Chemical mapping of a 177-nucleotide RNA with 2A3 and DMS. The RNA was probed in 150 mM KOAc, 10 mM MgCl2 and 150 mM bicine (pH 8.5) at 24 C. For 2A3, 17,967 sequencing reads were counted. The DMS profile rests on 7,398 reads. It was measured as part of the RMDB library OK1LIB.

[RMDB]
RNA sequence: GGGAACGACUCGAGUAGAGUCGAAAAGCUCUGCAGCAGGAGCUAGAGCGAAGACAUGUGACCUGCUGCAGCAUCACUUGUCGAUUAGCAGCUUGACGUGGACCACCAGGAACGUCUUGCUGCGAAAGGGUAGGAUGUGGUUCGCCACGUCCUACCCAAAAGAAACAACAACAACAAC
Reactivity to 2A3 in 0.01 (KOAc 150mM, MgCl2 10mM, bicine 150mM(pH8.5), 24C), signal-to-noise 9, nucleotides 027 to 126: g040c040u000c010u040g000c010a000g000c000a010g010g010a020g020c030u090a070g040a040g120c140g100a110a050g100a090c060a080u150g040u060g170a300c000c000u000g010c000u010g000c000a000g030c010a060u110c010a020c060u100u110g080u130c030g110a130u060u090a020g000c000a000g000c000u000u000g010a000c000g010u030g060g110a120c010c010a100c080c100a160g050g010a040a000c000g000u000c000u000u020g000c000u000g010c000g000a010a000a000
Reactivity to DMS in 0.01 (KOAc 150mM, MgCl2 10mM, bicine 150mM(pH8.5), 24C), signal-to-noise 6, nucleotides 027 to 126: g010c080u000c010u000g000c000a010g000c000a000g020g000a300g010c040u010a040g030a130g000c060g020a080a050g000a080c040a060u000g020u010g000a130c260c010u000g020c010u010g020c010a030g020c170a060u000c110a070c060u000u000g020u020c040g020a180u010u030a160g000c000a000g000c010u000u000g000a010c000g030u000g010g010a140c020c030a130c180c240a090g000g000a180a010c000g000u000c000u000u010g000c000u000g000c000g000a010a070a030